An RNA of 177 nucleotides, treated with DMS and read out base by base. For DMS the reverse transcriptase was MarathonRT. Conditions: 150 mM KOAc, 10 mM MgCl2 and 150 mM bicine (pH 8.5), 24 C. The DMS profile rests on 700 reads. The data come from the RNA Mapping Database (RMDB), library 15KREP.
RNA sequence: GGGAACGACUCGAGUAGAGUCGAAAAAGGCUGCAGUCCAUGGGUGGAAGAUGGUUGUGUGUGAUAAGGUACGUUCUCUCAAAUUGAGUGAUAAUAAUUGUUAUCUUAAUGCAGUUAUUAUGACACUAGAUGUUAUGACGUUCGCGUCAUAACAUCUAAAAGAAACAACAACAACAAC
Reactivity to DMS in 0.01 (KOAc 150mM, MgCl2 10mM, bicine 150mM(pH8.5), 24C), signal-to-noise 1, nucleotides 027 to 126: a080g010g020c040u000g020c050a150g000u030c020c060a060u010g010g010g030u010g010g000a170a070g010a160u000g010g020u000u030g030u000g050u000g000u000g000a070u010a120a030g010g000u000a150c140g010u000u000c040u000c030u030c120a060a110a220u000u000g010a120g000u000g010a000u000a000a040u010a010a010u010u000g000u000u000a140u000c280u010u020a070a100u000g000c000a000g020u010u000a000u000u010a000u000g000a030c010a120c220u000